[RMDB]
RNA sequence: GGGAACGACUCGAGUAGAGUCGAAAACAGGCCUCUGAUCAGCGCGUACUGUAUAUAGGCCGCGCCUAGACGAGAGCGCGGAUCGCGCCUGGCCGCAGUGCGAUCUCUGGCCUAGGCGCCAUGCGCGCUAUGGAGGAUGGUUCGCCAUCCUCCAUAGAAAAGAAACAACAACAACAAC
Reactivity to DMS in 0.01 (KOAc 150mM, MgCl2 10mM, bicine 150mM(pH8.5), 24C), signal-to-noise 9, nucleotides 027 to 126: c120a140g010g010c060c010u000c090u000g010a150u010c110a090g000c010g000c030g020u000a040c080u000g010u010a120u010a130u010a060g010g010c080c010g010c040g000c010c030u000a090g000a160c150g000a070g010a090g010c020g010c010g000g010a030u000c250g010c010g010c000c010u000g000g010c010c010g030c240a030g010u000g010c210g000a100u000c010u000c030u000g010g010c010c000u010a010g010g010c010g010c010c050a010u000g000c010g010c000g010
Reactivity to 2A3 in 0.01 (KOAc 150mM, MgCl2 10mM, bicine 150mM(pH8.5), 24C), signal-to-noise 9, nucleotides 027 to 126: c030a010g110g060c030c010u060c060u120g110a170u100c050a020g000c010g000c010g030u040a060c060u060g090u190a130u030a050u120a300g050g040c010c000g000c010g000c000c010u100a100g040a110c070g050a020g010a020g080c010g000c010g010g060a020u040c020g010c000g000c010c020u020g020g000c010c010g010c030a010g020u090g150c100g090a210u080c030u010c030u060g020g000c000c020u040a020g010g000c000g000c010c000a010u080g020c010g000c010g000